[RMDB]
RNA sequence: GGGAACGACUCGAGUAGAGUCGAAAAAUACAUUCCUGUGCCGGCAAUACAGUGUGUAUGGAGGUCUCAACGGCUCGGAAGUGCCAGCAAACCGGCGUAGAUAUUAGCAGACGUAUGGGCGUAAGACAAAAGAGAAUGAUGUUCGCAUCAUUCUCAACAUCUUAUUAUACUUCGGUAUAAUAAGAUGAAAAGAAACAACAACAACAAC
Reactivity to 2A3 in 0.01 (KOAc 150mM, MgCl2 10mM, bicine 150mM(pH8.5), 24C), signal-to-noise 7, nucleotides 027 to 156: a000u100a020c020a040u040u050c010c000u010g030u030g010c020c020g040g040c060a060a060u060a100c050a100g070u040g010u020g000u120a050u070g030g030a030g010g070u020c040u010c050a070a060c050g030g000c030u030c040g040g050a070a050g030u030g070c010c010a020g010c090a080a050a070c020c010g020g000c010g020u050a020g030a080u070a040u160u120a040g020c040a000g020a080c020g050u060a060u140g030g020g000c010g000u040a040a020g060a070c080a060a090a030a010g000a000g000a000a010u010g000a000u010g020u030u060c150g010c060a000u000c000a000u000u000c000u000c000a000a000
Reactivity to DMS in 0.01 (KOAc 150mM, MgCl2 10mM, bicine 150mM(pH8.5), 24C), signal-to-noise 3, nucleotides 027 to 156: a110u010a080c040a100u000u000c290c010u000g010u000g000c020c010g020g020c030a060a080u000a060c050a090g020u010g000u000g010u000a050u000g010g010a100g020g020u000c040u000c040a100a100c050g020g010c000u000c000g030g010a100a110g020u000g000c020c010a110g020c040a040a090a080c040c000g010g010c020g010u000a050g020a120u000a080u000u010a070g020c050a060g000a040c060g010u000a070u010g010g000g000c020g000u000a050a140g010a130c060a040a040a070a180g010a020g000a040a020u000g000a020u000g000u000u000c300g020c010a020u000c010a020u000u010c000u000c000a040a080